[RMDB]
RNA sequence: GGGAACGACUCGAGUAGAGUCGAAAACUCUUGUUAGGUGAAAGUUGAUGGUCGCCGUGUCAGUCCAUGCCUUUGAAAACAGUUCUAUGUAGUAGGCAGUCGAGAACCUAUGAGAGUUAGAACUUGCUAUGCCUUGGACUCUUCGGAGUCCAAGGAACAAAAGAAAGAUGUUCGCAUCUUUCUUUUGAAAAGAAACAACAACAACAAC
Reactivity to DMS in 0.01 (KOAc 150mM, MgCl2 10mM, bicine 150mM(pH8.5), 24C), signal-to-noise 7, nucleotides 027 to 156: c010u000c020u000u000g020u010u000a050g020g010u000g010a090a070a120g020u000u000g010a100u000g020g030u000c030g030c030c030g020u000g010u000c030a090g010u000c050c040a080u000g010c010c020u000u010u010g000a090a110a080a060c040a060g010u000u000c060u000a070u010g020u000a260g030u000a020g020g020c010a110g010u010c080g020a200g020a120a060c010c000u000a030u000g010a190g010a140g010u000u000a050g010a030a080c040u000u000g020c020u000a110u000g010c000c000u000u010g010g000a030c000u000c000u000u000c280g060g010a030g020u000c000c000a000a000g000g010a020a050
Reactivity to 2A3 in 0.01 (KOAc 150mM, MgCl2 10mM, bicine 150mM(pH8.5), 24C), signal-to-noise 6, nucleotides 027 to 156: c010u020c010u030u060g110u090u110a060g010g040u050g090a130a100a080g070u100u080g050a060u050g040g030u050c050g040c080c030g060u060g040u060c040a020g020u010c040c010a020u050g010c010c010u090u060u130g100a080a070a010a020c040a040g010u040u060c060u070a080u120g030u020a030g010u010a010g030g010c040a010g030u020c030g020a030g010a160a040c010c000u020a010u040g020a040g000a000g050u020u040a020g010a020a020c010u030u070g040c030u100a060u180g030c000c000u000u000g000g000a010c000u000c000u020u060c220g080g000a000g000u000c000c000a000a000g000g000a000a000